[RMDB]
RNA sequence: GGGAACGACUCGAGUAGAGUCGAAAACCGGAAUGGUUCCGCCGUGAUCGGGCCAUGCAAUAGUUGCCAACGACAACUAUGCUCCGGUUGCUCAGGCAGCGUUACGCUGCUUGAAAGACCACAUGAAUUAGCGCGACAUUGUUCGCAAUGUCGCGAACUCUGUAAACGGGUUCGCCCGUUUACAGAGAAAAGAAACAACAACAACAAC
Reactivity to DMS in 0.01 (KOAc 150mM, MgCl2 10mM, bicine 150mM(pH8.5), 24C), signal-to-noise 1, nucleotides 027 to 156: c010c000g020g000a060a040u000g010g000u000u010c000c000g000c050c100g020u020g020a070u000c030g000g000g000c000c030a030u000g040c150a110a080u000a000g020u000u000g020c000c020a240a190c300g000a120c000a010a010c000u010a020u000g020c070u000c040c020g030g040u000u010g000c120u000c010a000g010g010c020a010g000c000g020u020u000a080c100g020c000u000g000c010u010u000g010a030a090a100g030a280c000c010a060c120a160u000g030a150a130u000u000a130g020c010g000c000g020a030c030a030u000u010g000u000u000c160g000c010a020a000u000g020u000c000g000c020g020a020a040
Reactivity to 2A3 in 0.01 (KOAc 150mM, MgCl2 10mM, bicine 150mM(pH8.5), 24C), signal-to-noise 4, nucleotides 027 to 156: c000c010g000g020a090a060u100g000g000u250u300c000c050g010c040c140g180u200g050a230u120c030g000g000g010c010c010a010u040g000c020a110a270u000a010g010u000u000g010c070c110a130a080c190g070a130c010a000a010c040u000a010u010g010c020u000c010c020g010g000u000u010g000c020u000c010a000g000g000c000a000g000c000g030u070u070a080c140g000c000u000g000c000u000u000g000a000a010a000g030a010c010c040a030c070a200u210g160a170a090u140u060a110g070c010g000c000g000a000c010a000u020u000g010u050u030c070g000c110a000a000u000g020u010c000g000c010g000a000a000

Structure probing data (DMS and 2A3) for a 207-nucleotide construct. Values are in units of 0.01, from 0 to 300, in steps of 10. The reactions ran in a buffer of 150 mM KOAc, 10 mM MgCl2 and 150 mM bicine (pH 8.5), at 24 C. Reactivities are given for positions 27 through 156. It was measured as part of the RMDB library M2RFPK. The 2A3 profile rests on 2,506 reads. For 2A3 the reverse transcriptase was SuperScript II with manganese.